[RMDB]
RNA sequence: GGGAACGACUCGAGUAGAGUCGAAAAUGCUCAAAAACAGUUUUCGUGCUUCCGGAAUAUUACACAGCGGUUGUUGCAGAUGGCGACGGGCAUGGCGUAACUGGCGCAGCGUGGUGGAGUAAAUGCCCUGUUGUUAGAGGUUCGCCUCUAACAACAGAAAAGAAACAACAACAACAAC
Reactivity to DMS in 0.01 (KOAc 150mM, MgCl2 10mM, bicine 150mM(pH8.5), 24C), signal-to-noise 6, nucleotides 027 to 126: u010g010c020u010c030a100a070a080a110a080c110a100g010u000u000u000u000c030g010u010g000c040u000u000c040c030g010g000a090a060u010a080u010u010a100c140a070c110a070g010c050g010g010u000u000g010u010u000g000c040a080g010a100u010g010g010c040g000a060c070g010g000g020c060a050u000g010g010c080g000u010a040a070c080u000g000g000c070g010c050a070g020c070g020u000g000g020u000g000g000a070g010u000a040a050a060u010g000c050c050
Reactivity to 2A3 in 0.01 (KOAc 150mM, MgCl2 10mM, bicine 150mM(pH8.5), 24C), signal-to-noise 3, nucleotides 027 to 126: u060g020c000u010c030a070a040a010a060a030c050a100g010u030u040u070u090c040g040u040g020c010u060u020c010c010g030g050a080a040u140a070u140u110a070c080a010c020a060g050c040g070g010u040u020g030u050u080g060c020a020g030a130u090g070g020c020g000a030c010g000g010g000c040a030u040g020g000c000g020u020a070a030c030u050g040g000c020g000c030a000g030c020g060u070g020g030u020g020g030a040g020u060a020a090a040u090g050c010c010